The data come from the RNA Mapping Database (RMDB), library RFM100. This 177-nucleotide RNA was probed chemically with 2A3. 2A3 is a SHAPE reagent: it acylates the 2'-hydroxyl of flexible nucleotides of all four kinds. Reactivities are given for positions 27 through 126.
RNA sequence: GGGAACGACUCGAGUAGAGUCGAAAAAGUUCUUCUAAUACAAUUUAUACAACGCCAUUCCCUACACACUCUUAUAAAAGAGAUUCACGCGCGUCAAUAAAUUGUAUUACAUACUAACUAAAAAGCUGGCGUCAAAUUAAUUCGUUAAUUUGACGCCAAAAGAAACAACAACAACAAC
Reactivity to 2A3 in 0.01 (KOAc 150mM, MgCl2 10mM, bicine 150mM(pH8.5), 24C), signal-to-noise 1, nucleotides 027 to 126: a040g030u020u000c000u170u000c010u000a040a000u000a000c000a000a000u000u000u000a000u010a020c070a040a000c040g000c000c040a040u110u070c050c000c030u090a020c090a000c030a040c020u040c010u060u000a100u080a300a180a050a000g000a000g010a010u080u040c010a040c140g080c030g000c000g050u070c090a020a020u000a030a000a000u000u000g000u010a000u000u000a000c010a040u120a030c010u130a300a000c000u000a020a000a090a300a060g200c250u080